[RMDB]
RNA sequence: GGGAACGACUCGAGUAGAGUCGAAAAGUGAAAGCUCCUUCUCUCGCAAUGUGUAACUCAUGAUUCUCAUGACCCCUGGUUGGAGAGAUCCCGACUAGGAGCCAGGGGGCCUCUGAUUCUGCCAGCCAAAACUGUCGUAAGUUCGCUUACGACAGAAGUAGGGAUUGUAGUUCGCUACAAUCCCUACAAAAGAAACAACAACAACAAC
Reactivity to 2A3 in 0.01 (KOAc 150mM, MgCl2 10mM, bicine 150mM(pH8.5), 24C), signal-to-noise 2, nucleotides 027 to 156: g110u090g020a090a030a010g030c030u060c010c000u000u040c030u000c010u000c010g120c090a100a080u120g070u030g040u130a100a080c040u030c080a030u020g010a130u200u030c080u030c050a040u050g060a070c000c000c000c020u000g040g000u030u040g040g010a070g000a010g030a130u070c000c000c010g040a040c050u120a040g030g020a010g000c010c010a000g000g000g000g010g000c000c000u000c030u080g030a150u110u030c020u040g050c000c000a050g070c030c030a050a070a100a150c010u000g000u000c000g010u000a000a000g010u030u080c120g030c090u000u000a000c000g000a010c000a000g000a000a000

Structure probing data (2A3) for a 207-nucleotide construct. The RNA was probed in 150 mM KOAc, 10 mM MgCl2 and 150 mM bicine (pH 8.5) at 24 C. The 2A3 profile rests on 1,040 reads. The data come from the RNA Mapping Database (RMDB), library M2RFPK.